Chemical mapping of a 177-nucleotide RNA with DMS and 2A3. The 2A3 profile rests on 748 reads. DMS adducts were read by reverse transcription with MarathonRT.
[RMDB]
RNA sequence: GGGAACGACUCGAGUAGAGUCGAAAAUGGAACCGCAGUUGGUUCCUCGGAACUAAACUCGUGGUUCCUGUGGUUCACACCUGACCUCCUGAGCAGAAAAGAAAAAAGAAGGCGGCUCGGAGGAGCGCCCCGUUACAUUCUUCGGAAUGUAACGGGGAAAAGAAACAACAACAACAAC
Reactivity to DMS in 0.01 (KOAc 150mM, MgCl2 10mM, bicine 150mM(pH8.5), 24C), signal-to-noise 1, nucleotides 027 to 126: u020g000g020a000a010c000c000g040c000a050g030u010u010g000g000u000u000c000c030u020c300g040g000a000a000c010u000a060a020a020c000u000c150g070u030g000g000u000u020c000c000u000g020u000g000g000u000u000c100a070c090a150c050c030u010g010a100c030c000u000c010c000u030g000a010g030c070a160g010a070a080a130a080g000a010a080a120a130a090a170g000a160a100g030g000c100g020g030c010u000c040g000g020a050g030g010a040g000c030g000
Reactivity to 2A3 in 0.01 (KOAc 150mM, MgCl2 10mM, bicine 150mM(pH8.5), 24C), signal-to-noise 1, nucleotides 027 to 126: u060g000g040a000a010c000c020g030c020a020g030u020u010g020g020u020u040c020c030u020c140g100g010a000a000c000u120a250a010a040c000u020c120g020u000g020g010u030u010c010c010u000g090u060g050g020u150u100c070a030c010a020c040c030u070g120a080c000c000u000c000c040u140g030a000g000c020a020g120a070a160a160a020g280a080a300a040a030a040a040g120a070a060g100g040c100g060g060c010u000c000g000g000a010g000g000a020g070c020g040